[RMDB]
RNA sequence: GGGAACGACUCGAGUAGAGUCGAAAAUCAAUAGUAGAAUCUAUACGAUGGACAUAUUCUACUAGGAGUAUCAAGAAGUACGUAUAGAUGAUACUCAUUAGUCAGUAAUCGUACUUCACUGACUGAAGAUAGUAUGCUGAUUCGUCGGUAUACUAUCAAAAGAAACAACAACAACAAC
Reactivity to 2A3 in 0.01 (KOAc 150mM, MgCl2 10mM, bicine 150mM(pH8.5), 24C), signal-to-noise 9, nucleotides 027 to 126: u100c030a020a080u030a050g000u000a000g010a020a010u010c040u060a050u070a080c070g110a130u170g070g010a030c020a040u210a010u030u000c010u020a140c020u030a060g040g040a010g000u010a010u040c060a080a050g050a080a010g090u060a080c020g030u040a050u090a120g060a040u090g000a010u010a010c000u010c030a070u040u080a010g010u010c020a000g030u050a040a040u090c080g040u060a050c010u050u060c040a010c020u030g030a010c000u030g030a060a010
Reactivity to DMS in 0.01 (KOAc 150mM, MgCl2 10mM, bicine 150mM(pH8.5), 24C), signal-to-noise 9, nucleotides 027 to 126: u030c050a080a070u020a020g010u010a000g000a150a020u000c050u020a040u010a050c070g010a120u020g010g010a150c250a060u020a020u010u000c000u010a050c120u020a050g020g010a020g010u000a010u000c070a090a100g000a110a080g010u010a040c020g010u010a300u010a040g010a070u000g000a090u000a000c010u000c120a090u020u010a030g010u000c020a030g000u010a050a060u020c130g010u010a040c090u000u010c120a060c060u000g000a030c020u000g000a080a100
Chemical mapping of a 177-nucleotide RNA with 2A3 and DMS. The RNA was probed in 150 mM KOAc, 10 mM MgCl2 and 150 mM bicine (pH 8.5) at 24 C. Values are in units of 0.01, from 0 to 300, in steps of 10. For DMS, 57,499 sequencing reads were counted. For 2A3 the reverse transcriptase was SuperScript II with manganese.